[RMDB]
RNA sequence: GGGAACGACUCGAGUAGAGUCGAAAAGAUAUGGAAUGGUACUAGCUUUUGACGCUUCUAAGUCGGAAACGACUUAGAAAGCGAUAAGCUAACCAUUCCUAAGUCAAAAGAUAGCUUCGGCUAUCAAGAUCUCUUGUUAGUUCGCUAACAAGAGAUCAAAAGAAACAACAACAACAAC
Reactivity to DMS in 0.01 (KOAc 150mM, MgCl2 10mM, bicine 150mM(pH8.5), 24C), signal-to-noise 3, nucleotides 027 to 126: g000a040u000a300u020g000g000a030a010u000g000g010u000a150c300u000a020g010c000u000u000u020u000g030a260c050g030c000u000u000c000u000a010a000g010u010c010g000g000a070a060a140c010g010a010c000u010u000a000g000a020a010a020g060c000g010a080u010a010a010g010c000u000a030a040c000c000a010u000u000c000c010u000a000a040g000u020c040a110a100a130a140g000a010u000a000g010c000u000u020c270g050g010c000u000a000u000c010a130a110
Reactivity to 2A3 in 0.01 (KOAc 150mM, MgCl2 10mM, bicine 150mM(pH8.5), 24C), signal-to-noise 4, nucleotides 027 to 126: g000a000u030a030u070g000g010a000a020u010g000g020u080a190c120u040a180g040c050u110u190u200u300g300a280c070g010c010u000u000c000u000a000a000g000u000c000g000g040a020a030a020c010g000a000c000u000u000a000g010a000a020a000g000c000g020a050u090a140a000g000c000u000a010a010c000c000a000u010u000c000c000u000a010a000g020u000c010a030a000a040a230g010a000u000a000g010c020u080u060c300g130g000c010u000a000u010c000a010a040
An RNA of 177 nucleotides, treated with DMS and 2A3 and read out base by base. For 2A3 the reverse transcriptase was SuperScript II with manganese. DMS adducts were read by reverse transcription with MarathonRT. Reactivities are given for positions 27 through 126.